Source: RMDB library M2PK90, as collected in RNAgym. Chemical mapping of a 177-nucleotide RNA with DMS. DMS adducts were read by reverse transcription with MarathonRT. For DMS, 1,248 sequencing reads were counted. Reactivities are given for positions 27 through 126. The RNA was probed in 150 mM KOAc, 10 mM MgCl2 and 150 mM bicine (pH 8.5) at 24 C.
RNA sequence: GGGAACGACUCGAGUAGAGUCGAAAAUAGAAGUCGCGAUAAAUGGGCGCCGGCCGAGCGGAGGGAGAUCCGAGCGGCGGCGGCAAGCUGGCUGCGAGCGGCUGAGCAGCACUCCAAGCUCGAACAAUGCUAGCAGAAUAUUCGUAUUCUGCUAGCAAAAAGAAACAACAACAACAAC
Reactivity to DMS in 0.01 (KOAc 150mM, MgCl2 10mM, bicine 150mM(pH8.5), 24C), signal-to-noise 2, nucleotides 027 to 126: u000a130g020a150a060g020u000c010g010c030g000a150u000a020a100a130u010g020g010g010c030g010c020c030g000g010c010c010g000a000g020c000g000g000a030g000g000g020a120g020a160u000c020c000g020a030g000c010g020g000c020g030g000c020g010g000c030a030a090g000c080u000g030g000c020u000g020c060g010a110g000c020g000g020c050u010g000a090g000c030a070g000c090a190c050u000c030c020a080a120g000c040u000c050g010a110a050c200a040a100